[RMDB]
RNA sequence: GGGAACGACUCGAGUAGAGUCGAAAACUCCACUCAGGAUCCUCCAGGAUCCUGGGACAGUAGGCUCUAAGAGCAGCUAUGAGAUGUCUCACCUUCCUUGGCUCGGGGUUUGGAGGACAGAUGUAGCCAAGUAACUAGCUUUCGAGCUAGUUACUUGAAAAGAAACAACAACAACAAC
Reactivity to 2A3 in 0.01 (KOAc 150mM, MgCl2 10mM, bicine 150mM(pH8.5), 24C), signal-to-noise 3, nucleotides 027 to 126: c010u000c010c020a050c000u020c010a010g020g020a040u000c000c030u160c140c060a030g010g020a000u000c000c000u000g000g000g000a000c020a020g180u210a040g030g120c010u000c070u170a280a130g010a020g080c030a020g040c020u050a060u180g170a130g020a140u070g070u040c020u020c040a170c010c010u050u030c020c010u070u050g170g000c050u060c080g020g000g020g000u070u080u210g040g000a020g020g000a000c020a010g070a030u110g030u050a020g000c000
Reactivity to DMS in 0.01 (KOAc 150mM, MgCl2 10mM, bicine 150mM(pH8.5), 24C), signal-to-noise 5, nucleotides 027 to 126: c070u000c020c070a300c020u010c010a010g000g010a010u010c010c000u010c230c300a260g010g010a010u000c000c000u000g000g000g000a050c200a070g000u000a080g010g000c020u000c030u000a110a100g010a040g030c030a110g010c030u010a070u010g000a090g000a140u000g010u000c020u000c030a140c030c020u010u000c010c030u000u000g000g000c070u000c060g000g000g000g010u000u000u000g000g010a230g010g010a050c050a040g010a170u000g010u000a060g000c070

The data come from the RNA Mapping Database (RMDB), library OK2TRN.
Chemical mapping of a 177-nucleotide RNA with 2A3 and DMS.
Values cover nucleotides 27 to 126.
For DMS, 4,706 sequencing reads were counted.
The reactions ran in a buffer of 150 mM KOAc, 10 mM MgCl2 and 150 mM bicine (pH 8.5), at 24 C.